Chemical mapping of a 177-nucleotide RNA with 2A3 and DMS. The reactions ran in a buffer of 150 mM KOAc, 10 mM MgCl2 and 150 mM bicine (pH 8.5), at 24 C.
RNA sequence: GGGAACGACUCGAGUAGAGUCGAAAAGAUAUGGAGAUCUAUACCUCCGACGAUCGCUUUCGGAAACGAAAGCGGGAGGAGAUAUAGAGUCUCCUAAGUCAAAGUGACUCACUUCGGUGAGUCACAACAGUCAAGUAUACUUCGGUAUACUUGACUGAAAAGAAACAACAACAACAAC
Reactivity to 2A3 in 0.01 (KOAc 150mM, MgCl2 10mM, bicine 150mM(pH8.5), 24C), signal-to-noise 3, nucleotides 027 to 126: g030a000u080a060u200g000g020a020g000a000u010c010u010a000u000a020c000c010u000c010c010g170a290c020g000a040u030c010g000c000u010u000u000c000g030g040a130a070a050c000g000a010a010a000g000c000g000g000g000a010g000g000a000g000a000u020a000u010a010g070a040g140u020c000u000c000c000u020a180a010g020u010c050a160a030a120g000u000g010a000c000u000c010a010c020u070u120c300g150g000u000g000a000g000u000c000a000c000a000a000
Reactivity to DMS in 0.01 (KOAc 150mM, MgCl2 10mM, bicine 150mM(pH8.5), 24C), signal-to-noise 5, nucleotides 027 to 126: g010a050u000a300u010g000g010a000g010a260u000c000u010a000u000a020c040c000u000c000c000g000a080c300g000a040u010c010g010c000u000u000u010c000g000g000a140a130a270c000g010a010a000a000g010c010g000g000g010a020g010g000a000g010a020u000a010u000a020g000a090g000u000c010u000c000c000u000a010a100g000u000c050a110a110a150g010u000g000a010c000u000c010a000c000u010u010c250g020g010u000g000a020g010u000c000a000c010a050a160